[RMDB]
RNA sequence: GGGAACGACUCGAGUAGAGUCGAAAAUAUACAUCAGAAGUCGGCACAACUCCCGACUCGCGGUGAGCGAUGCAGCGUAGCCGACGCUACGCAGCUGCUGUGCGGAUGGCUAGCAAAAGCUAGCCUAAAUAUAAUCCCUAUUCGUAGGGAUUAUAUUAAAAGAAACAACAACAACAAC
Reactivity to 2A3 in 0.01 (KOAc 150mM, MgCl2 10mM, bicine 150mM(pH8.5), 24C), signal-to-noise 9, nucleotides 027 to 126: u160a000u030a030c030a030u090c020a030g080a180a010g100u020c010g020g080c160a030c040a300a300c130u060c000c000c010g010a020c010u000c010g000c030g020g050u100g040a020g000c040g090a110u170g010c020a010g000c010g010u010a010g000c040c110g170a060c070g000c010u000a000c010g000c030a050g020c010u040g000c010u030g050u090g060c020g080g040a080u070g020g000c000u010a000g000c020a090a090a270a110g000c010u000a000g000c000c000u000a000
Reactivity to DMS in 0.01 (KOAc 150mM, MgCl2 10mM, bicine 150mM(pH8.5), 24C), signal-to-noise 9, nucleotides 027 to 126: u040a110u030a180c050a060u010c040a070g010a140a040g000u000c010g010g010c230a110c090a080a140c260u020c110c000c000g000a060c070u010c020g000c300g000g010u010g000a090g010c060g000a080u020g010c030a030g010c010g010u000a010g000c010c120g050a130c260g000c000u000a000c010g010c020a030g030c010u010g000c050u000g020u020g000c070g000g000a090u010g000g010c000u000a020g000c000a110a080a100a130g010c000u000a010g000c000c000u000a000

The record gives the reactivity of an RNA of 177 nucleotides to 2A3 and DMS. DMS adducts were read by reverse transcription with MarathonRT. For DMS, 45,715 sequencing reads were counted. Source: RMDB library OK1LIB, as collected in RNAgym.